RNA sequence: GGGAACGACUCGAGUAGAGUCGAAAAUAAAAUGGUAAGAACGGUUCCAAAGGAGCCGAACGUCAUAGCUAUGGCAUCGAUCUAAAAUCUUAUCAAUUAGGUGACGAGCUUGGCACUGAUCAAAAAACAAUAUUAAUAGCUUCGGCUAUUAAUAUUGAAAAGAAACAACAACAACAAC
Reactivity to DMS in 0.01 (KOAc 150mM, MgCl2 10mM, bicine 150mM(pH8.5), 24C), signal-to-noise 3, nucleotides 027 to 126: u000a040a060a110a110u000g010g020u010a080a050g000a090a270c010g010g020u000u010c010c020a110a140a190g010g000a030g030c010c010g020a030a040c150g010u000c060a060u000a120g010c030u000a050u020g010g000c000a020u000c040g010a050u000c050u010a030a060a090a110u000c080u020u010a110u000c140a070a130u010u020a030g010g000u000g000a030c030g000a080g000c030u000u000g020g000c020a170c130u010g000a030u010c020a000a030a030a090a060a120
Reactivity to 2A3 in 0.01 (KOAc 150mM, MgCl2 10mM, bicine 150mM(pH8.5), 24C), signal-to-noise 3, nucleotides 027 to 126: u180a000a100a000a050u090g020g000u030a080a050g020a110a020c010g020g030u020u030c010c000a240a180a120g030g000a000g000c020c000g010a020a000c020g010u020c010a020u070a080g000c000u080a100u160g030g000c000a030u020c040g040a030u000c000u030a040a050a120a100u070c090u150u170a120u180c050a070a200u090u020a040g000g030u010g020a050c010g000a000g020c010u020u030g020g000c040a020c040u030g050a080u120c080a020a120a070a020a000a040
This 177-nucleotide RNA was probed chemically with DMS and 2A3. It was measured as part of the RMDB library M2PK90. Values cover nucleotides 27 to 126.